Structure probing data (2A3) for a 177-nucleotide construct.
[RMDB]
RNA sequence: GGGAACGACUCGAGUAGAGUCGAAAAUUCGGAUUCUUCCUCUUCAUUUAAGAAUUCAAAAACUCUGUUCACGGCAGCCACAGAGGACUGUAUUGCUGAGGAUAACUGAGUAAUCUGAGACAUAGGCGGUGGGUUUUAUGUUCGCAUAAAACCCACCAAAAGAAACAACAACAACAAC
Reactivity to 2A3 in 0.01 (KOAc 150mM, MgCl2 10mM, bicine 150mM(pH8.5), 24C), signal-to-noise 2, nucleotides 027 to 126: u020u020c040g000g000a000u000u020c000u000u020c120c000u060c080u070u080c020a200u130u130u200a080a000g030a140a070u150u110c030a000a020a090a090a090c030u000c000u000g000u000u160c030a020c060g080g020c080a060g030c110c000a000c000a070g090a030g020g000a070c060u040g020u070a060u020u040g090c070u020g000a040g000g000a080u000a110a040c090u050g000a000g090u120a000a070u020c000u000g020a010g070a060c070a080u260a230g000g300c010
Background:
For 2A3 the reverse transcriptase was SuperScript II with manganese.